[RMDB]
RNA sequence: GGGAACGACUCGAGUAGAGUCGAAAAUCUCUGAUUGCCUUGAGGUAGCCGGGCUCGAAUAGGUGGGCUCGCGGCGAUGCGCAGGAAAGAGCAAAACAGUGAACUGGGCGUGUGCUGGGGUCGCGUCCCUGAAGUGUGGGAUGUGCGAUCUGUCCGCGCACUGGUGACAGUUCGCUGUCACCAGUGCAAAAGAAACAACAACAACAAC
Reactivity to 2A3 in 0.01 (KOAc 150mM, MgCl2 10mM, bicine 150mM(pH8.5), 24C), signal-to-noise 1, nucleotides 027 to 156: u030c000u000c050u020g050a090u060u050g040c000c000u130u160g150a100g080g050u050a040g000c010c000g020g020g000c000u010c030g080a170a040u110a220g070g020u090g110g030g000c000u010c010g120c020g030g000c030g000a020u040g030c060g000c030a000g000g050a150a090a030g020a010g000c060a040a030a030a030c000a010g020u040g040a040a000c050u040g030g030g000c050g020u040g000u010g000c030u030g000g000g050g000u000c000g000c000g020u030c000c000c000u050g130a300a120g120u100g030u040g190g000g000a030u020g070u200g170c000g000a020u000c040u070g050u000c000c010g160c060